[RMDB]
RNA sequence: GGGAACGACUCGAGUAGAGUCGAAAAUGCGCGAGACUCUAUGCCCGUGACAGAGUGGUAUCAGAGCAGACUUGCUUUACAUCAAUGCCCAGCAGUUCACUCGAUGAUGCACAACUCCAGGGCUAGCCUUUUUGGACAUGUUCGCAUGUCCAAAAAGAAAAGAAACAACAACAACAAC
Reactivity to DMS in 0.01 (KOAc 150mM, MgCl2 10mM, bicine 150mM(pH8.5), 24C), signal-to-noise 2, nucleotides 027 to 126: u000g000c080g020c050g000a030g020a120c060u030c050u000a070u010g000c020c000c000g000u010g020a110c230a140g000a040g000u000g000g010u010a010u000c010a050g000a020g000c080a090g000a030c030u000u000g040c010u000u020u020a050c140a110u020c110a050a100u000g020c010c060c070a060g010c040a030g000u010u010c080a170c030u000c060g000a140u020g030a030u000g010c080a050c070a100a060c070u000c020c010a100g020g010g000c040u000a030g000c200
Reactivity to 2A3 in 0.01 (KOAc 150mM, MgCl2 10mM, bicine 150mM(pH8.5), 24C), signal-to-noise 1, nucleotides 027 to 126: u060g000c060g000c070g030a050g000a040c030u030c000u090a040u120g020c020c000c030g060u050g000a080c100a060g060a000g070u070g050g000u020a000u010c040a020g010a000g030c040a010g060a070c030u080u250g010c000u070u110u160a030c000a080u090c050a160a160u120g030c060c010c000a030g000c010a010g010u020u070c000a010c100u020c000g210a170u140g010a000u000g050c010a050c000a180a190c010u010c000c020a020g000g000g000c010u000a000g000c000